[RMDB]
RNA sequence: GGGAACGACUCGAGUAGAGUCGAAAAAUAUGACUGCUUGUUAUUAAAAUGAUUGUUUCAGUUGUCUUUGUUUGGAUAUCAUAUUUGCUGAUGCUCAAGUCAGCGGAGAUAAAGCUCGGUUUACCGGCAAAUUGUUGCAGUUCGCUGCAACAAUUUGAAAAGAAACAACAACAACAAC
Reactivity to 2A3 in 0.01 (KOAc 150mM, MgCl2 10mM, bicine 150mM(pH8.5), 24C), signal-to-noise 2, nucleotides 027 to 126: a000u180a090u150g010a110c010u000g050c040u020u180g050u090u050a130u060u040a060a070a050a150u130g090a220u060u120g010u010u080u000c040a010g090u000u050g140u300c050u190u110u010g150u040u020u110g000g030a030u040a020u120c000a040u040a190u230u150u180g060c000u010g000a070u030g030c080u050c230a150a060g000u000c000a000g000c000g000g030a050g000a000u120a070a020a000g030c000u000c070g030g000u060u070u050a100c000c080g000g000
Reactivity to DMS in 0.01 (KOAc 150mM, MgCl2 10mM, bicine 150mM(pH8.5), 24C), signal-to-noise 4, nucleotides 027 to 126: a050u010a040u000g000a060c070u020g000c090u020u020g010u020u010a070u010u040a070a070a110a120u020g000a100u010u010g010u000u010u020c020a160g010u000u000g000u010c050u000u010u000g010u000u000u020g040g010a110u010a100u010c050a030u030a120u000u000u010g000c030u000g000a010u000g010c160u040c170a090a230g000u000c020a010g030c030g010g000a020g020a020u000a010a100a080g010c060u010c000g000g010u020u010u010a090c010c020g010g010

Chemical mapping of a 177-nucleotide RNA with 2A3 and DMS. The RNA was probed in 150 mM KOAc, 10 mM MgCl2 and 150 mM bicine (pH 8.5) at 24 C. The data come from the RNA Mapping Database (RMDB), libraries RFM100 and RFMREP.